[RMDB]
RNA sequence: GGGAACGACUCGAGUAGAGUCGAAAAGGGCCAGCCGGCGCCCGCGAGGACGCGCGGAGCCCCCGCCGUGGCCGGGACCGCGGGCUGGAACGCCCCCGCGCACCAGGAAUGUCUUGUAGGCGCCCGCCUAGGUCUAACGGUUCGCCGUUAGACCUAGAAAAGAAACAACAACAACAAC
Reactivity to 2A3 in 0.01 (KOAc 150mM, MgCl2 10mM, bicine 150mM(pH8.5), 24C), signal-to-noise 2, nucleotides 027 to 126: g010g030g000c000c000a000g010c010c010g110g000c010g010c010c000c000g010c030g060a070g080g060a040c020g070c000g000c010g030g020a060g020c000c000c000c000c000g000c000c010g020u030g050g030c080c070g030g010g020a080c170c010g000c050g020g020g000c000u020g010g030a040a040c030g010c000c000c000c000c020g000c010g010c020a050c020c020a010g090g000a180a130u160g060u070c010u020u100g020u040a050g030g000c000g020c030c000c000g020c010
Reactivity to DMS in 0.01 (KOAc 150mM, MgCl2 10mM, bicine 150mM(pH8.5), 24C), signal-to-noise 2, nucleotides 027 to 126: g020g000g010c030c020a040g030c040c000g020g040c000g020c030c000c010g000c130g010a130g000g020a010c050g020c110g000c010g000g000a130g010c060c050c080c000c040g040c000c010g000u000g000g030c080c040g000g000g000a070c140c030g000c010g010g020g010c020u000g010g020a050a010c030g020c020c010c000c020c060g000c030g040c050a080c040c000a060g020g010a270a110u000g000u000c040u000u000g010u010a140g020g010c030g010c030c080c090g000c120